[RMDB]
RNA sequence: GGGAACGACUCGAGUAGAGUCGAAAAAAGUUGCACCAGGUACGGAUACCAGACGUUGCCAAACAGGGUGACAUGAGGAUCACCCAUGUACUGUCCCUUGGCACCCGUACCUGGUGCUGGUGAAAAAGGAGUGUACAUCUUUCGAGAUGUACACUCCAAAAGAAACAACAACAACAAC
Reactivity to 2A3 in 0.01 (KOAc 150mM, MgCl2 10mM, bicine 150mM(pH8.5), 24C), signal-to-noise 1, nucleotides 027 to 126: a000a010g270u140u010g000c000a000c000c000a000g030g000u000a000c010g000g000a040u040a230c090c010a000g060a080c110g080u120u010g030c000c000a070a030a010c040a030g030g000g000u000g020a010c060a120u260g170a100g170g070a130u080c010a060c000c000c000a030u020g020u010a030c090u150g020u040c040c000c040u000u020g010g020c040a010c030c000c000g000u020a030c010c000u000g000g000u000g000c000u000g000g000u120g050a070a010a020a010a000
Reactivity to DMS in 0.01 (KOAc 150mM, MgCl2 10mM, bicine 150mM(pH8.5), 24C), signal-to-noise 2, nucleotides 027 to 126: a050a050g000u000u000g020c000a010c000c010a000g000g000u000a000c020g040g000a150u000a100c160c120a110g010a070c150g010u010u000g010c020c030a050a060a080c040a020g000g000g010u000g000a000c010a150u020g010a140g020g010a190u000c020a030c000c010c000a030u000g020u000a050c230u000g000u010c000c040c010u000u000g010g010c010a010c060c010c010g010u010a010c000c000u000g000g010u000g000c000u000g000g020u000g010a060a070a060a110a140